[RMDB]
RNA sequence: GGGAACGACUCGAGUAGAGUCGAAAAGAUAUGGAUUCAGACAUGUCCGUUGAUCGGAAACGAUCAAACGGACAACAGCUGACUGUCCUAAGUCAAAGUCCAAUCCAUCUUCGGAUGGAUUGGACAACAAUAACGAUUACUUCGGUAAUCGUUAUUGAAAAGAAACAACAACAACAAC
Reactivity to DMS in 0.01 (KOAc 150mM, MgCl2 10mM, bicine 150mM(pH8.5), 24C), signal-to-noise 9, nucleotides 027 to 126: g000a060u000a300u000g000g000a050u000u000c000a020g010a050c090a230u000g010u000c000c010g020u000u000g000a010u000c000g000g000a100a080a160c000g010a020u000c000a030a040a030c000g010g010a010c010a010a030c250a190g010c010u000g000a030c300u010g010u000c000c010u000a070a110g010u000c050a110a090a130g010u000c000c010a000a000u000c000c000a000u000c000u000u010c180g020g000a010u000g000g000a010u000u000g000g000a000c000a010a050
Reactivity to 2A3 in 0.01 (KOAc 150mM, MgCl2 10mM, bicine 150mM(pH8.5), 24C), signal-to-noise 7, nucleotides 027 to 126: g040a010u090a050u190g030g000a020u040u040c010a000g090a110c070a140u110g010u000c000c000g000u010u010g000a010u000c010g010g050a090a060a040c020g000a000u000c030a070a110a010c010g020g030a000c000a000a000c000a000g020c010u000g020a050c100u140g040u020c010c000u040a150a030g060u040c080a150a110a030g000u000c000c000a000a010u000c000c000a010u010c010u050u110c300g120g000a000u010g000g010a000u000u000g000g020a000c000a000a000